[RMDB]
RNA sequence: GGGAACGACUCGAGUAGAGUCGAAAAGUGGCCGGAGCCGUGAACCGUGCAUGCUGGCGCUGGCAGUACAACUACGUGUUCCCGAAGCGCGCCGUGAUCGCUCCCUUCUUCCAGCUGACCGUCGCCAUGGAUCUAAAAUUUUCGAAUUUUAGAUCCAAAAAGAAACAACAACAACAAC
Reactivity to DMS in 0.01 (KOAc 150mM, MgCl2 10mM, bicine 150mM(pH8.5), 24C), signal-to-noise 9, nucleotides 027 to 126: g010u010g000g010c020c010g010g000a120g020c020c030g010u020g010a090a120c070c050g000u010g010c050a090u010g020c050u020g010g000c040g020c020u010g000g010c030a060g000u020a070c110a070a080c080u000a050c100g010u010g010u010u000c010c000c000g010a110a070g010c060g000c040g020c040c030g010u000g000a090u010c070g000c030u010c020c030c020u000u010c030u000u000c030c030a070g000c050u000g010a080c040c020g010u000c050g020c030c050a150
Reactivity to 2A3 in 0.01 (KOAc 150mM, MgCl2 10mM, bicine 150mM(pH8.5), 24C), signal-to-noise 9, nucleotides 027 to 126: g070u050g040g010c010c010g020g020a010g020c020c020g070u070g040a040a040c030c010g030u080g030c020a050u120g030c020u050g020g000c020g010c030u010g020g010c030a010g040u120a050c050a110a010c030u120a030c070g050u040g020u080u020c000c000c010g020a070a030g030c040g000c010g000c020c010g030u030g030a090u060c030g000c030u030c010c010c000u050u060c000u060u020c020c010a020g010c020u030g030a030c000c020g030u030c010g000c010c010a060